Record summary:
This 177-nucleotide RNA was probed chemically with DMS and 2A3. The RNA was probed in 150 mM KOAc, 10 mM MgCl2 and 150 mM bicine (pH 8.5) at 24 C. For DMS the reverse transcriptase was MarathonRT. It was measured as part of the RMDB library OK2TST.

[RMDB]
RNA sequence: GGGAACGACUCGAGUAGAGUCGAAAAGCUCGGUUAACAUUUUUGUCUACCUUCACAUCCAUUUUGGAGCAUCAGGAUAUCACACCCGGUAGUAUCUAAAAUGAGUCCCGUAGAAGCUCCGCAGUUCGAUUGCAUCCUGAUUCGUCAGGAUGCAAUCAAAAGAAACAACAACAACAAC
Reactivity to DMS in 0.01 (KOAc 150mM, MgCl2 10mM, bicine 150mM(pH8.5), 24C), signal-to-noise 1, nucleotides 027 to 126: g020c050u000c070g010g000u010u010a140a100c040a100u000u010u000u010u010g000u010c030u000a040c020c000u030u000c100a080c080a110u000c030c010a080u070u000u010u000g000g000a030g000c030a030u000c010a160g050g000a020u020a030u010c130a130c060a080c080c090c060g040g010u000a130g000u000a040u000c070u000a000a020a030a070u000g010a110g010u000c020c010c010g050u000a060g010a060a220g000c060u010c030c010g010c230a100g000u000u010c110
Reactivity to 2A3 in 0.01 (KOAc 150mM, MgCl2 10mM, bicine 150mM(pH8.5), 24C), signal-to-noise 1, nucleotides 027 to 126: g020c020u010c040g040g040u070u050a080a020c020a060u020u050u020u040u160g000u000c020u020a020c010c000u030u090c060a040c020a060u000c000c000a040u120u160u080u140g050g000a020g000c010a010u070c010a020g000g000a020u060a010u160c100a080c010a040c060c120c020g010g000u010a030g000u000a080u090c060u070a020a000a050a030u020g030a030g060u000c030c000c000g010u020a060g010a120a010g000c000u000c050c020g000c020a060g060u110u130c040